[RMDB]
RNA sequence: GGGAACGACUCGAGUAGAGUCGAAAAUAACGGACUAGGAAACUCGAUGUUUUAAGUGGUAAUCCUAGCGAAUCCACGGCGAGGAAACUAGGACACUAACCAUGUGAUCCCGGACGCUAGAAGAAAAGUGCGGAGUAAGAUUCGUCUUACUCCGCACAAAAGAAACAACAACAACAAC
Reactivity to 2A3 in 0.01 (KOAc 150mM, MgCl2 10mM, bicine 150mM(pH8.5), 24C), signal-to-noise 1, nucleotides 027 to 126: u110a070a080c060g040g030a010c010u030a020g000g180a120a040a070c000u020c010g040a060u090g230u080u080u060u180a250a020g000u000g000g000u030a050a040u070c000c000u000a000g010c000g030a020a020u010c010c010a040c080g060g020c050g070a020g000g020a000a110a040c010u020a000g010g010a000c010a020c070u010a010a080c020c000a000u050g050u010g020a070u000c000c020c000g000g040a000c040g020c030u050a040g000a120a020g070a050a210a000a010
Reactivity to DMS in 0.01 (KOAc 150mM, MgCl2 10mM, bicine 150mM(pH8.5), 24C), signal-to-noise 1, nucleotides 027 to 126: u000a030a100c090g010g000a130c040u000a110g030g000a040a120a290c040u000c000g000a030u010g030u000u000u010u040a140a080g000u020g000g020u000a080a150u000c020c010u020a000g000c060g040a280a050u000c000c010a030c040g000g000c030g000a030g010g010a090a050a190c030u000a030g000g000a090c070a040c100u020a000a160c160c040a080u000g000u010g000a120u020c020c010c000g010g010a200c040g000c010u010a000g000a070a070g010a050a070a030a130